[RMDB]
RNA sequence: GGGAACGACUCGAGUAGAGUCGAAAAGGAGUUAAGUUCGCUUAACUCCCACUACCGAGAAUGCGACUCGGUAUAUCGCAAUAACCCUUGGAAUCAAGGGAACCACUGACGACUUCGGUCGUCAGAACUCCGUGAACAUGUUCGCAUGUUCACGGAGAAAAGAAACAACAACAACAAC
Reactivity to DMS in 0.01 (KOAc 150mM, MgCl2 10mM, bicine 150mM(pH8.5), 24C), signal-to-noise 1, nucleotides 027 to 126: g000g050a030g000u000u000a000a010g000u000u010c300g040c000u000u000a000a010c000u000c000c010c050a100c130u020a090c000c020g010a020g000a190a040u030g010c110g000a060c040u000c010g000g040u000a040u000a000u000c040g040c180a130a080u000a190a070c000c000c000u000u000g000g000a180a130u010c010a020a040g020g000g010a020a110c240c240a090c000u000g000a050c010g010a000c000u000u000c210g000g060u000c000g000u000c000a000g000a000a130
Reactivity to 2A3 in 0.01 (KOAc 150mM, MgCl2 10mM, bicine 150mM(pH8.5), 24C), signal-to-noise 2, nucleotides 027 to 126: g000g000a000g000u020u000a000a000g000u040u110c140g000c110u000u000a010a000c000u050c000c000c000a090c000u030a010c010c010g000a010g030a090a080u140g080c120g090a060c010u000c000g040g050u020a040u000a000u020c030g010c090a070a040u050a220a190c010c000c000u030u000g090g130a250a200u300c010a000a000g040g010g020a030a040c050c030a060c060u010g000a000c010g000a000c000u040u070c210g070g000u000c000g010u030c000a000g000a000a000